Source: RMDB library TTRDEL, as collected in RNAgym. An RNA of 177 nucleotides, treated with 2A3 and DMS and read out base by base. For DMS the reverse transcriptase was MarathonRT. Conditions: 150 mM KOAc, 10 mM MgCl2 and 150 mM bicine (pH 8.5), 24 C.

[RMDB]
RNA sequence: GGGAACGACUCGAGUAGAGUCGAAAAGAUAUGGAUCGGUUGUCAGUUAUAGUGUCGGAAACGACAUGAUUAACUUGGAUUUACCGAGUCCUAAGUCAAAACGGUGGUUCCUUCGGGAACCACCGAAGUAGGUAUGACUGUUCGCAGUCAUACCUACAAAAGAAACAACAACAACAAC
Reactivity to 2A3 in 0.01 (KOAc 150mM, MgCl2 10mM, bicine 150mM(pH8.5), 24C), signal-to-noise 1, nucleotides 027 to 126: g010a020u110a050u190g000g020a000u030c020g010g000u000u000g010u030c020a000g000u010u000a010u020a030g000u000g020u010c040g000g050a090a050a080c010g020a000c000a010u030g000a040u010u140a020a010c030u050u210g160g000a070u300u140u190a000c000c030g000a000g050u010c000c000u020a100a040g060u080c020a080a020a080a060c020g000g000u010g040g000u000u000c000c000u020u050c230g110g000g010a010a000c000c000a000c000c000g020a000a000
Reactivity to DMS in 0.01 (KOAc 150mM, MgCl2 10mM, bicine 150mM(pH8.5), 24C), signal-to-noise 2, nucleotides 027 to 126: g010a040u000a300u000g030g000a210u000c000g000g000u000u000g010u010c010a020g000u020u000a010u010a170g000u000g000u000c010g030g000a130a070a230c020g020a000c000a010u000g000a240u020u000a000a000c000u000u010g020g000a020u000u000u000a010c010c000g000a030g010u010c000c000u000a020a160g000u010c020a060a060a090a180c010g020g020u000g000g010u000u000c000c000u000u020c190g030g000g000a010a000c000c010a000c000c000g010a000a030